[RMDB]
RNA sequence: GGGAACGACUCGAGUAGAGUCGAAAACUUCUCGGGGUUGUAGGACUGCGACGUGGGACUUUAAAAGGAUAGAAGAAUUACCUGGGAAGGUAAGCCAAAGAGAGUAAUAGCCUCGUAUUUAAAAUUCCUACUAUGAUUCGUUCGCGAAUCAUAGUAGAAAAGAAACAACAACAACAAC
Reactivity to DMS in 0.01 (KOAc 150mM, MgCl2 10mM, bicine 150mM(pH8.5), 24C), signal-to-noise 2, nucleotides 027 to 126: c230u000u010c000u010c010g040g020g000g030u010u000g000u000a080g020g010a080c080u000g020c070g020a050c130g010u010g010g000g000a090c070u000u000u020a050a030a130a100g010g000a100u010a190g010a050a050g010a030a020u010u000a020c000c000u000g000g020g010a070a020g000g000u000a010a010g010c050c030a060a060a080g010a290g010a040g000u000a040a040u000a120g010c000c000u000c040g000u000a160u000u010u000a050a060a120a140u000u010c040